[RMDB]
RNA sequence: GGGAACGACUCGAGUAGAGUCGAAAAUGAUGAGCCUCAGCGAUUUCGACGAUCACAUGCUGCACGACAUCGGGCUUCGCCGCGAAGACAUCUAUACCGCCAUGCGUGAUCGCCGUGUGGAGGACCAGCUGGUAGUGAGUUUCGACUCACUACCAGCAAAAGAAACAACAACAACAAC
Reactivity to 2A3 in 0.01 (KOAc 150mM, MgCl2 10mM, bicine 150mM(pH8.5), 24C), signal-to-noise 2, nucleotides 027 to 126: u210g040a030u070g040a010g050c000c000u020c010a030g010c050g090a080u020u260u190c050g030a050c030g020a040u000c010a000c020a050u180g020c050u050g000c050a050c050g040a020c000a080u060c000g010g000g000c020u080u040c070g070c110c000g130c030g080a060a010g070a030c020a030u030c020u070a090u060a070c010c050g010c000c030a040u070g000c030g010u070g020a040u030c000g000c000c000g050u160g060u080g120g000a020g020g070a020c010c000a000
Reactivity to DMS in 0.01 (KOAc 150mM, MgCl2 10mM, bicine 150mM(pH8.5), 24C), signal-to-noise 1, nucleotides 027 to 126: u010g000a050u000g000a150g010c030c010u000c070a110g000c050g000a150u000u000u000c050g030a040c000g000a030u000c030a030c050a080u010g000c050u000g010c110a090c050g000a050c070a090u000c160g000g020g000c030u000u000c070g020c130c040g010c080g000a010a050g000a070c120a070u000c060u020a090u010a090c100c040g000c110c020a080u000g010c030g050u000g010a030u000c040g020c050c010g020u000g000u010g000g010a040g030g000a080c000c120a070